[RMDB]
RNA sequence: GGGAACGACUCGAGUAGAGUCGAAAAUCAAGAAGGCCACACGCCAGUUCAUCAUGACCGUUACAUUUUGAGGUUAUAAAGUUCAAUUGCAACACAUAGACUAAGGUUUACAUGGUGAAGCGAUGGUAUCUUUCCAUUUUUUCGAAAAUGGAAAGAUAAAAGAAACAACAACAACAAC
Reactivity to 2A3 in 0.01 (KOAc 150mM, MgCl2 10mM, bicine 150mM(pH8.5), 24C), signal-to-noise 9, nucleotides 027 to 126: u090c030a030a030g110a060a050g130g010c020c010a050c020a020c050g020c010c020a030g040u020u010c000a010u000c000a010u020g030a030c030c040g060u070u120a050c040a160u070u090u060u200g100a070g040g040u070u070a130u110a150a130a070g080u040u020c040a070a110u120u110g050c050a050a020c030a010c020a090u070a030g040a020c030u070a080a090g090g010u030u050u050a050c020a020u020g010g000u010g010a020a000g030c020g050a040u050g010g020u030
Reactivity to DMS in 0.01 (KOAc 150mM, MgCl2 10mM, bicine 150mM(pH8.5), 24C), signal-to-noise 9, nucleotides 027 to 126: u020c080a110a110g010a160a120g020g000c020c020a050c100a080c050g020c020c300a120g010u000u000c020a020u000c020a020u010g000a130c170c090g010u000u000a030c050a060u020u000u020u010g010a040g000g020u010u020a100u020a060a090a170g010u010u000c010a030a020u010u010g000c040a020a050c020a100c150a140u010a040g000a050c040u010a070a140g020g000u000u000u000a090c070a030u000g000g010u000g000a030a080g000c040g010a120u000g000g000u010